[RMDB]
RNA sequence: GGGAACGACUCGAGUAGAGUCGAAAAUAGUAGGGGAACCUGUGGGGGAAAAUAUGGAGUUCAAGGUGUAGAUUACGAGAAUGGGCGUGGUCCCGCUCUAUUCCCUUGAUCGUCUCCUGAAAACGCAAUCCCACCGUCGGUUCGCCGACGGUGGGAUAAAAGAAACAACAACAACAAC
Reactivity to DMS in 0.01 (KOAc 150mM, MgCl2 10mM, bicine 150mM(pH8.5), 24C), signal-to-noise 1, nucleotides 027 to 126: u000a300g030u040a090g000g000g000g000a080a080c100c080u000g020u000g000g000g000g000g000a030a120a170a000u010a110u050g000g000a020g000u000u010c030a010a020g000g000u060g000u040a140g000a060u010u010a050c300g000a090g050a000a030u020g040g020g000c000g190u090g000g000u000c000c020c000g030c020u000c000u000a060u000u000c300c000c000u010u000g050a070u000c190g050u000c010u010c000c000u000g000a050a000a130a110c210g000c220a070
Reactivity to 2A3 in 0.01 (KOAc 150mM, MgCl2 10mM, bicine 150mM(pH8.5), 24C), signal-to-noise 1, nucleotides 027 to 126: u190a020g150u000a000g000g000g000g050a000a300c000c000u040g020u050g040g000g050g000g000a000a200a000a000u300a040u000g010g010a000g040u040u000c000a000a020g020g000u050g160u190a110g090a210u000u120a140c020g070a070g050a140a200u300g000g000g000c090g020u280g050g000u300c000c000c000g010c000u000c020u040a110u000u040c000c000c020u000u000g000a000u010c120g100u100c070u000c000c000u000g040a250a000a000a000c020g040c190a000
Record summary:
This 177-nucleotide RNA was probed chemically with DMS and 2A3. For 2A3 the reverse transcriptase was SuperScript II with manganese. For DMS, 795 sequencing reads were counted. The data come from the RNA Mapping Database (RMDB), library OK1LIB. Conditions: 150 mM KOAc, 10 mM MgCl2 and 150 mM bicine (pH 8.5), 24 C.